Record summary: The record gives the reactivity of an RNA of 177 nucleotides to 2A3 and DMS. The RNA was probed in 150 mM KOAc, 10 mM MgCl2 and 150 mM bicine (pH 8.5) at 24 C.
RNA sequence: GGGAACGACUCGAGUAGAGUCGAAAAUUUCAGGGGGUGGAGGGUAGCAUAGGGUAUCACCCAAUUGCCACUCCUUUGAUCCCGCGACACUACUAGAAGCCUAAAGUUCGCGGUUGGCCCUACUAAUUUCUAAACUGUUCUUCGGAACAGUUUAGAAAAAAGAAACAACAACAACAAC
Reactivity to 2A3 in 0.01 (KOAc 150mM, MgCl2 10mM, bicine 150mM(pH8.5), 24C), signal-to-noise 3, nucleotides 027 to 126: u020u040u020c010a030g000g010g000g020g000u020g010g010a030g020g010g060u040a010g080c130a070u080a050g140g060g020u070a050u170c050a050c000c010c020a040a040u070u100g000c000c000a020c000u040c010c000u070u040u060g040a010u040c000c010c000g000c000g000a030c040a000c130u130a050c020u040a030g080a280a070g150c040c020u040a050a060a020g000u020u010c000g000c010g020g000u050u110g100g000c020c030c000u030a070c040u050a040a120u000
Reactivity to DMS in 0.01 (KOAc 150mM, MgCl2 10mM, bicine 150mM(pH8.5), 24C), signal-to-noise 2, nucleotides 027 to 126: u000u000u020c040a030g000g000g020g000g020u020g010g000a050g010g000g020u000a060g050c040a020u000a130g000g000g000u000a150u030c140a010c040c010c000a140a030u020u030g020c010c010a000c000u010c010c000u010u020u020g030a040u030c120c000c010g020c000g000a030c190a060c010u010a070c170u000a050g030a180a130g000c190c120u020a040a120a150g030u000u010c000g000c010g000g000u020u010g000g060c000c030c030u030a170c100u010a080a110u020

For 2A3 the reverse transcriptase was SuperScript II with manganese.
For DMS the reverse transcriptase was MarathonRT.